[RMDB]
RNA sequence: GGGAACGACUCGAGUAGAGUCGAAAAGAUAUGGAUCAAGAACUACAUCCACGCUAAGACAGGACAUCGGAAACGAUGUCUCGAGCGUGGUGCUUGAUCCUAAGUCAAAGGUGACUUCGGUCACCAAGUCUCAAUGAAAGUUCGCUUUCAUUGAGACAAAAGAAACAACAACAACAAC
Reactivity to DMS in 0.01 (KOAc 150mM, MgCl2 10mM, bicine 150mM(pH8.5), 24C), signal-to-noise 7, nucleotides 027 to 126: g010a030u000a300u000g000g000a000u000c000a010a010g000a120a070c140u020a300c100a060u010c010c010a010c000g020c000u010a120a070g020a140c300a100g000g010a000c000a010u000c000g000g010a070a080a140c000g000a010u000g000u000c000u000c040g000a010g010c000g020u000g000g010u000g000c010u000u000g000a000u000c000c010u000a010a070g000u000c040a080a090a140g010g020u000g010a020c000u000u010c150g020g000u000c010a010c000c000a020a060
Reactivity to 2A3 in 0.01 (KOAc 150mM, MgCl2 10mM, bicine 150mM(pH8.5), 24C), signal-to-noise 8, nucleotides 027 to 126: g030a020u090a020u150g000g000a000u000c010a010a000g030a120a100c100u170a080c300a080u120c030c020a000c000g030c010u170a230a060g120a130c070a100g100g000a010c000a010u000c000g020g010a040a060a040c010g000a010u000g000u020c000u010c000g000a000g000c000g000u010g010g000u000g010c000u010u000g000a010u000c000c010u010a080a020g030u030c070a150a040a060g000g000u000g000a000c000u080u160c300g090g000u010c000a000c010c000a000a000
Chemical mapping of a 177-nucleotide RNA with DMS and 2A3.
Reactivities are rounded to 0.1 and cut off at 0 and 3.
As a SHAPE reagent, 2A3 marks flexible, mostly unpaired nucleotides at the ribose 2'-OH.
The RNA was probed in 150 mM KOAc, 10 mM MgCl2 and 150 mM bicine (pH 8.5) at 24 C.
It was measured as part of the RMDB library TTRDEL.